Background:
Conditions: 150 mM KOAc, 10 mM MgCl2 and 150 mM bicine (pH 8.5), 24 C. Chemical mapping of a 207-nucleotide RNA with DMS and 2A3. For 2A3, 2,440 sequencing reads were counted. For DMS, 3,577 sequencing reads were counted. For DMS the reverse transcriptase was MarathonRT.
[RMDB]
RNA sequence: GGGAACGACUCGAGUAGAGUCGAAAAACUUGUAUAGGCGAUUAAUAAAUCUUCUGUAAAUGCUGUAAGAGGAUUACCCCUUGAGGUUUCAACACUAGGCUGCUCUAGCGAUUAAUCAAUGCAUUUGUAACGGAAAGACAGUUCGCUGUCUUUCCAAGACUAAAUAUGUGUUCGCACAUAUUUAGUCAAAAGAAACAACAACAACAAC
Reactivity to DMS in 0.01 (KOAc 150mM, MgCl2 10mM, bicine 150mM(pH8.5), 24C), signal-to-noise 2, nucleotides 027 to 156: a070c020u000u000g000u000a150u010a050g030g010c050g000a100u000u000a100a150u010a090a080a060u000c010u000u010c030u020g000u000a140a070a110u000g030c080u000g000u010a100a080g010a020g010g000a150u010u010a120c040c020c010c030u000u000g000a120g010g030u000u000u010c020a030a050c010a040c040u010a040g020g000c070u000g000c160u000c010u000a020g020c000g010a130u000u000a100a060u020c040a090a090u000g010c050a150u000u010u000g010u010a040a110c090g020g020a020a020a030g000a030c000a060g030u000u020c300g020c030u010g020u000c000u000u000u000c000c000a000a100
Reactivity to 2A3 in 0.01 (KOAc 150mM, MgCl2 10mM, bicine 150mM(pH8.5), 24C), signal-to-noise 4, nucleotides 027 to 156: a020c060u100u110g040u050a150u090a120g030g040c030g050a060u090u160a180a100u200a110a130a040u040c030u090u000c000u020g090u130a070a120a090u070g020c030u020g040u100a070a050g010a030g020g000a030u040u070a060c020c010c010c010u010u070g040a140g080g000u040u060u130c080a090a000c000a000c110u020a020g030g020c030u020g000c010u090c020u070a020g040c000g060a030u060u180a080a020u070c090a070a050u100g040c010a040u060u050u120g080u050a100a030c030g000g000a000a010a000g000a000c000a000g000u030u080c120g000c110u000g000u000c000u020u000u000c000c000a000a000